[RMDB]
RNA sequence: GGGAACGACUCGAGUAGAGUCGAAAACGGUGGUGGACGCGACGCAGUCAAUGAACCCGUCUGCGAGGAAGGAGUUUAUCAAGGUGCUGAAAGACGUCGUGGGUACCCAGCAGUGCACCUUCAUGGAGAUCGACGUACCAUUCGUGGUACGUCGAUCAAAAGAAACAACAACAACAAC
Reactivity to DMS in 0.01 (KOAc 150mM, MgCl2 10mM, bicine 150mM(pH8.5), 24C), signal-to-noise 1, nucleotides 027 to 126: c060g050g000u010g000g000u000g000g020a010c130g030c180g000a130c000g050c110a150g010u070c080a100a030u000g040a080a110c020c000c000g100u060c000u000g000c170g050a230g000g000a000a070g090g000a260g030u020u000u000a020u050c300a040a110g000g000u000g000c000u000g000a030a010a050g020a200c130g000u070c080g030u000g000g000g000u000a050c010c000c010a040g000c080a150g030u150g000c000a070c040c030u000u000c000a060u000g000g000a300
Reactivity to 2A3 in 0.01 (KOAc 150mM, MgCl2 10mM, bicine 150mM(pH8.5), 24C), signal-to-noise 1, nucleotides 027 to 126: c040g070g000u110g000g090u070g030g030a040c010g050c000g020a000c040g020c020a000g000u030c000a000a020u240g020a070a010c000c000c000g010u000c000u020g000c040g020a020g070g000a000a080g010g010a140g000u110u020u110a070u070c030a040a010g070g040u070g010c000u040g040a200a100a040g080a070c090g000u100c070g000u050g000g070g020u010a010c000c000c000a030g010c000a020g000u070g010c040a010c060c000u030u030c040a160u150g050g000a080